Annotation
Chemical mapping of a 207-nucleotide RNA with 2A3. Conditions: 150 mM KOAc, 10 mM MgCl2 and 150 mM bicine (pH 8.5), 24 C. 2A3 adducts were read by reverse transcription with SuperScript II with manganese. Source: RMDB library PDB130, as collected in RNAgym.
RNA sequence: GGGAACGACUCGAGUAGAGUCGAAAACUGAGAUUAUCAUCCAACCUCCAAGGAUGGUAAUCCGGCGUCGAUUGUAAGGUCUAAACAAUUGACGCACCACUACUACAGUCCCAACGACUGAGGGACUCGUCGACUCGGUUAAGAUCGGAAACCGGGUGUAACACUUUUGCUUCGGCAAAAGUGUUACAAAAGAAACAACAACAACAAC
Reactivity to 2A3 in 0.01 (KOAc 150mM, MgCl2 10mM, bicine 150mM(pH8.5), 24C), signal-to-noise 1, nucleotides 027 to 156: c030u080g020a020g000a250u020u000a000u030c000a000u020c030c000a080a150c080c110u190c050c080a080a060g000g000a000u000g000g020u000a000a000u000c000c050g020g000c000g000u000c000g000a000u000u020g020u030a090a070g170g070u090c140u160a140a100a020c000a000a000u000u000g000a000c010g010c000a040c000c010a010c020u270a050c030u020a030c060a000g020u030c000c000c020a060a020c140g240a030c100u130g090a090g000g010g010a010c000u030c030g090u080c060g000a000c000u000c010g000g010u040u060a040a110g050a300u210c130g020g070a040a000a000c000c020g000g010g000u010